The data come from the RNA Mapping Database (RMDB), library ARCHII.
The record gives the reactivity of an RNA of 207 nucleotides to DMS and 2A3.
RNA sequence: GGGAACGACUCGAGUAGAGUCGAAAAGUAGCGGGUAGUGGGGACGCGUCCGCUUUAUCAACGCUAACGCCAAAUUUAAACGGCAAACAACAAAACAACUACGCUUUAGCAGCUUAAUAACCUGCUUGCGUGCUCCUGCUUUGCAUCGCCCAUGUGCGGACCAUAUAUUCUUCGGAAUAUAUGGUCCAAAAGAAACAACAACAACAAC
Reactivity to DMS in 0.01 (KOAc 150mM, MgCl2 10mM, bicine 150mM(pH8.5), 24C), signal-to-noise 1, nucleotides 027 to 156: g050u000a030g030c060g000g010g000u000a080g000u000g010g010g050g050a070c140g070c020g000u000c040c030g020c040u000u000u000a090u020c100a100a050c000g020c050u010a050a070c040g010c040c040a040a080a200u000u000u000a070a180a160c080g030g070c060a060a010a140c100a100a090c070a030a020a020a110c020a040a030c070u000a000c010g010c070u000u000u010a000g060c050a000g040c020u020u000a110a090u000a170a070c300c010u000g030c000u000u000g010c010g000u000g010c040u000c080c040u000g020c040u000u000u010g000c060a030u000c010g000c000c030c010a090u020g000u000g030c290
Reactivity to 2A3 in 0.01 (KOAc 150mM, MgCl2 10mM, bicine 150mM(pH8.5), 24C), signal-to-noise 3, nucleotides 027 to 156: g050u030a010g030c120g090g070g020u040a000g000u030g010g020g010g130a050c100g010c000g060u040c000c000g000c000u040u100u040a010u020c020a000a020c000g000c030u050a110a050c090g000c020c030a040a010a110u120u190u130a060a110a040c070g010g000c040a060a060a020c060a020a030c030a020a140a030a010c050a030a040c030u070a010c030g020c010u060u120u050a000g010c000a000g000c000u000u040a030a000u050a030a020c000c000u000g000c000u020u010g010c000g000u010g000c000u000c000c020u000g000c000u020u040u050g010c020a060u070c060g030c010c000c010a030u100g050u080g080c040

Conditions: 150 mM KOAc, 10 mM MgCl2 and 150 mM bicine (pH 8.5), 24 C.